[RMDB]
RNA sequence: GGGAACGACUCGAGUAGAGUCGAAAACGGGGCUAGCGAGUGGAUGUUCCGCCCCCCGAGGGGGCCGAGUGAGGCUUAUCCCGGGGAUCGGCGUCGCCCCCACAUAGCAGACCCCGGGUCCCCUUCCGAGCUUAGCCGUUCGCGGCUAAGAAAAGAAACAACAACAACAAC
Reactivity to 2A3 in 0.01 (KOAc 150mM, MgCl2 10mM, bicine 150mM(pH8.5), 24C), signal-to-noise 6, nucleotides 027 to 129: c010g000g020g010g020c020u050a070g020c020g030a040g040u050g010g060a080u080g060u100u030c030c000g020c020c010c010c000c000c000g010a230g010g000g000g010g000c000c000g030a080g120u300g110a100g030g000c000u060u110a150u150c000c000c000g000g000g000g000a150u090c090g010g000c010g020u100c040g060c000c000c010c060c000a010c010a020u190a010g000c030a000g010a300c000c000c000c000g010g010g010u050c010c000c000c010u130u010c030c020g030a060g010
Reactivity to DMS in 0.01 (KOAc 150mM, MgCl2 10mM, bicine 150mM(pH8.5), 24C), signal-to-noise 6, nucleotides 027 to 129: c070g000g000g000g000c070u000a060g020c070g040a160g000u000g000g050a110u010g020u050u020c040c030g030c020c030c020c000c010c040g000a110g020g000g020g010g030c040c030g040a170g060u090g050a140g000g000c030u000u000a100u070c000c000c000g000g000g020g030a170u000c110g050g010c030g020u000c120g030c010c030c050c040c020a040c100a090u080a270g020c050a110g020a080c000c000c000c000g050g020g000u020c030c010c010c060u000u000c010c000g030a170g020

An RNA of 170 nucleotides, treated with 2A3 and DMS and read out base by base. 2A3 adducts were read by reverse transcription with SuperScript II with manganese. It was measured as part of the RMDB library 15KLIB. The 2A3 profile rests on 18,041 reads. For DMS, 21,078 sequencing reads were counted.